[RMDB]
RNA sequence: GGGAACGACUCGAGUAGAGUCGAAAACGGUCCUGCCAUGAGACCGUAACGAGGACAUGUCGCCUCGAAUUGCGUCGGGGAGCCGGCAGCUUACCCCAAGGAUGAGCGCCUAAUGCCGGUACCCGGGUAUACGCUACCCCGUUCGCGGGGUAGCGAACCACGAAUUAUGGUUCGCCAUAAUUCGUGGAAAAGAAACAACAACAACAAC
Reactivity to 2A3 in 0.01 (KOAc 150mM, MgCl2 10mM, bicine 150mM(pH8.5), 24C), signal-to-noise 1, nucleotides 027 to 156: c020g000g020u040c020c000u130g170c120c060a190u200g040a130g020a160c000c000g000u010a010a020c000g000a010g020g010a020c080a140u250g070u200c140g010c020c000u000c010g000a060a090u180u090g030c030g080u100c000g000g000g020g000a090g110c000c010g020g020c000a010g000c010u020u000a010c000c020c010c070a090a090g040g010a180u130g020a020g000c060g020c050c020u080a120a040u060g000c000c000g000g000u000a010c000c010c000g000g000g000u140a140u010a040c000g000c000u000a000c020c000c000c000g000u040u040c180g040c060g030g000g000g010u010a030g000c000g000a010a010
The record gives the reactivity of an RNA of 207 nucleotides to 2A3. For 2A3 the reverse transcriptase was SuperScript II with manganese. Conditions: 150 mM KOAc, 10 mM MgCl2 and 150 mM bicine (pH 8.5), 24 C. The data come from the RNA Mapping Database (RMDB), library M2RFPK.